Conditions: 150 mM KOAc, 10 mM MgCl2 and 150 mM bicine (pH 8.5), 24 C. Chemical mapping of a 177-nucleotide RNA with DMS.
RNA sequence: GGGAACGACUCGAGUAGAGUCGAAAAUCUGAUGAAGAUAACGUUGAAGUUAAAAAGUGGGGUACACCACGUGAGUUUUCAUUUGAACCAAAAGCACAUUGGGAUAUUGUAGAAGAAUUGAAAAUGGUCCAUGUCGAUCAUUCGUGAUCGACAUGGAAAAAGAAACAACAACAACAAC
Reactivity to DMS in 0.01 (KOAc 150mM, MgCl2 10mM, bicine 150mM(pH8.5), 24C), signal-to-noise 1, nucleotides 027 to 126: u010c040u060g000a060u040g000a090a050g000a040u020a080a150c060g040u020u000g060a040a300g000u080u020a100a150a140a110a160g100u000g000g000g030g000u060a020c060a150c040c020a000c090g000u000g000a080g000u010u000u010u010c020a090u000u000u000g010a000a170c060c000a000a010a060a110g010c070a040c120a130u010u000g020g050g000a070u030a090u020u030g000u040a040g030a060a100g010a000a060u020u000g030a010a000a010a030u060g000g000
Reactivities are given for positions 27 through 126.